This 207-nucleotide RNA was probed chemically with 2A3. It was measured as part of the RMDB library OK3TST. The reactions ran in a buffer of 150 mM KOAc, 10 mM MgCl2 and 150 mM bicine (pH 8.5), at 24 C. Values cover nucleotides 27 to 156.

[RMDB]
RNA sequence: GGGAACGACUCGAGUAGAGUCGAAAAUUCGCAGAAACAAAUGAAUAAUUAUAUACCAACAUGGAGAACUUAAGCUCAUAGGUGAAUGUGGGAAUAUGGAGGAGAAUGAAAAUCAUUGCCAGGUGAGUGAUCAAAGAGUGCAUUCUAGAAAAGGUGACUCGUAUCAUGACUUCGGUCAUGAUACGAGAAAAGAAACAACAACAACAAC
Reactivity to 2A3 in 0.01 (KOAc 150mM, MgCl2 10mM, bicine 150mM(pH8.5), 24C), signal-to-noise 1, nucleotides 027 to 156: u010u020c070g000c050a040g050a020a100a020c090a040a040a070u060g050a090a140u300a060a060u080u050a080u040a030u140a250c040c050a090a030c030a090u110g080g000a180g070a020a020c040u060u060a090a040g020c000u000c090a030u040a050g030g070u070g080a190a080u000g080u100g030g010g020a000a060u090a020u130g020g000a000g020g000a030g020a030a070u080g000a090a040a000a000u150c030a060u070u050g020c010c010a000g000g040u000g010a010g020u060g010a000u120c030a070a060a010g010a000g000u020g040c010a040u030u030c000u040a060g020a070a030a100a010g090g000u010g030a050